[RMDB]
RNA sequence: GGGAACGACUCGAGUAGAGUCGAAAAUCGUGCGCCUCGCGCAACGAGACAACCGGCGACGCCGCCUAAGGUCAAGGGCGGCGUGCGUUAGCACUUCCGUCACUCUUGUCAAUUAGCCGCAGCAAACGACAAGAGGGUUUUUCGAAACCCUCUUGUCAAAAGAAACAACAACAACAAC
Reactivity to DMS in 0.01 (KOAc 150mM, MgCl2 10mM, bicine 150mM(pH8.5), 24C), signal-to-noise 2, nucleotides 027 to 126: u000c040g030u010g020c090g010c000c080u020c300g000c010g040c010a070a060c020g020a030g000a130c130a060a080c060c030g000g010c040g000a030c010g020c020c000g000c010c000u020a100a120g010g010u010c060a080a160g000g010g000c000g010g000c190g000u000g010c000g020u000u010a040g020c090a060c030u000u000c060c050g010u000c050a080c050u020c030u010u000g000u000c030a040a150u020u010a060g010c030c030g020c080a090g000c120a070a070a100c190
Reactivity to 2A3 in 0.01 (KOAc 150mM, MgCl2 10mM, bicine 150mM(pH8.5), 24C), signal-to-noise 2, nucleotides 027 to 126: u020c020g010u020g010c040g030c060c090u160c120g020c020g000c050a070a060c040g010a010g020a040c070a090a110c010c000g040g010c000g040a000c030g000c010c000g010c020c020u060a100a060g130g100u130c080a050a120g030g010g000c000g010g000c000g020u000g000c000g000u020u060a020g000c020a030c090u060u060c030c020g040u040c020a050c080u010c020u090u100g060u100c000a030a200u090u020a120g030c040c020g000c070a030g010c040a140a040a010c070